[RMDB]
RNA sequence: GGGAACGACUCGAGUAGAGUCGAAAAAAUGCCGCCUCAGUUCCAAGCUCUUUCGUGGCACUGUAAGCAGUCCUAUUGAGUUAGGGGCAGUCAACCACGUUGCGAAGCUAAAUUAUCUGGUCGAGAGUUACGAUUCCCUACUUCGGUAGGGAAUCAACCUUAUAUAAGUGUUCGCACUUAUAUAAGGAAAAGAAACAACAACAACAAC
Reactivity to 2A3 in 0.01 (KOAc 150mM, MgCl2 10mM, bicine 150mM(pH8.5), 24C), signal-to-noise 4, nucleotides 027 to 156: a000a010u090g040c010c020g040c000c020u050c020a030g020u070u020c020c020a060a030g010c010u000c010u010u040u030c050g020u020g010g010c080a020c020u040g020u070a110a080g060c040a050g100u090c010c000u040a040u030u120g170a160g250u030u040a020g010g020g010g000c000a000g030u020c000a010a140c010c020a010c020g020u010u050g030c090g090a080a010g010c010u040a030a090a120u160u130a080u080c090u070g050g010u070c070g020a010g000a010g160u090u080a070c090g000a000u000u000c000c000c000u000a000c000u020u040c130g090g000u010a000g000g000g000a000a000u000c000a000a000
Reactivity to DMS in 0.01 (KOAc 150mM, MgCl2 10mM, bicine 150mM(pH8.5), 24C), signal-to-noise 2, nucleotides 027 to 156: a070a050u000g000c000c030g010c000c000u010c020a100g030u010u000c010c020a120a260g000c040u000c030u000u000u000c030g050u010g020g020c050a050c010u000g000u000a070a150g010c080a210g000u010c000c000u010a070u000u010g010a240g020u000u000a050g010g030g010g000c000a020g010u000c040a080a050c020c010a030c070g000u000u010g000c100g030a100a090g030c030u000a070a070a050u010u000a070u010c040u010g040g020u000c030g020a110g010a140g020u000u000a090c100g010a060u000u000c000c000c000u000a010c000u000u000c280g060g030u000a000g010g010g000a010a000u010c010a040a070